[RMDB]
RNA sequence: GGGAACGACUCGAGUAGAGUCGAAAAGAAAGAAAGAAGACAAAUCUUCAUCCGUCAGAGCAUAUCUCAGUUACACAACUUCCUAAAUAGUGUCACUGGUUAUCCUCUGUCGAAAUGAAGAUGUCAACAUGACCUCCGUAUUCGUACGGAGGUCAUGAAAAGAAACAACAACAACAAC
Reactivity to DMS in 0.01 (KOAc 150mM, MgCl2 10mM, bicine 150mM(pH8.5), 24C), signal-to-noise 2, nucleotides 027 to 126: g010a100a100a130g040a110a100a070g020a110a110g000a020c050a080a160a110u030c000u000u000c000a000u000c050c030g040u010c000a000g000a000g020c280a010u010a000u010c030u100c000a020g020u000u000a020c000a000c010a090a110c300u000u010c060c110u020a060a030a060u010a130g000u000g000u000c030a010c000u000g000g000u000u040a030u000c290c000u000c000u000g000u010c010g000a030a140a000u000g000a000a010g000a070u000g000u000c000a060a180
Reactivity to 2A3 in 0.01 (KOAc 150mM, MgCl2 10mM, bicine 150mM(pH8.5), 24C), signal-to-noise 7, nucleotides 027 to 126: g080a020a070a000g150a040a060a010g140a100a040g020a000c050a010a300a140u000c010u000u000c000a000u020c020c000g000u010c000a000g000a000g000c020a050u010a000u000c140u020c180a000g010u000u000a000c000a000c000a050a190c090u230u270c050c050u270a160a150a150u190a100g000u000g000u010c010a000c000u000g000g010u010u000a000u010c000c000u010c010u010g000u000c000g020a060a020a020u010g000a000a000g000a000u010g000u000c000a000a030